[RMDB]
RNA sequence: GGGAACGACUCGAGUAGAGUCGAAAAACCGCUUUGCCAGGCGCAAAGGUCAGCUUCUUGGAGGCUGCGAUCUUGAUCGUCGCUCCGGUUGCCGGAUUGCGGCCUUCACGCUCCGGAGUGUCCUUCACCCGUCGUCACGGUUCGCCGUGACGACGGGAAAAGAAACAACAACAACAAC
Reactivity to 2A3 in 0.01 (KOAc 150mM, MgCl2 10mM, bicine 150mM(pH8.5), 24C), signal-to-noise 1, nucleotides 027 to 126: a000c000c020g090c000u040u040u070g090c050c030a060g040g020c020g010c000a060a060a000g060g010u110c100a010g020c040u070u000c040u160u140g060g030a050g010g020c030u040g000c040g060a000u020c020u080u210g130a070u030c030g120u030c110g060c040u020c040c030g120g000u060u090g110c210c060g030g070a100u040u100g060c000g000g020c000c030u000u000c020a000c020g000c000u000c010c020g000g010a080g000u030g070u090c050c000u060u040c100a110
Source: RMDB library OK1LIB, as collected in RNAgym. The record gives the reactivity of an RNA of 177 nucleotides to 2A3. 2A3 adducts were read by reverse transcription with SuperScript II with manganese. The reactions ran in a buffer of 150 mM KOAc, 10 mM MgCl2 and 150 mM bicine (pH 8.5), at 24 C.